This 207-nucleotide RNA was probed chemically with 2A3. The reactions ran in a buffer of 150 mM KOAc, 10 mM MgCl2 and 150 mM bicine (pH 8.5), at 24 C.

[RMDB]
RNA sequence: GGGAACGACUCGAGUAGAGUCGAAAAUUGAAGAUACCGGCCAUGCGGCACGUUGACCUGCGCACGUUAGUCAUCUGCUUCUCGGAGCUAGCGGCGACGGAAUUGAUGGCGUAGGCGGUUAGUUGCGUAGCGUCUCGCGCGUAAUUGUCGCGCAGCGGCCUCCGCAGUAAUUCGUUACUGCGGAGGCAAAAGAAACAACAACAACAAC
Reactivity to 2A3 in 0.01 (KOAc 150mM, MgCl2 10mM, bicine 150mM(pH8.5), 24C), signal-to-noise 1, nucleotides 027 to 156: u070u030g030a030a000g060a040u250a080c030c040g130g090c050c050a240u230g000c010g000g110c000a010c020g000u000u070g130a120c000c000u060g050c020g000c010a160c140g050u010u020a000g000u000c060a060u000c090u010g010c110u180u060c260u220c170g020g000a030g000c010u000a000g030c000g000g000c000g050a030c000g000g010a020a000u080u240g130a260u040g100g140c050g060u060a000g000g030c000g010g040u020u060a040g000u030u060g030c080g080u060a020g010c000g010u020c040u150c140g000c000g030c000g000u100a290a170u200u050g080u220c000g020c010g000c010a010g020c010g000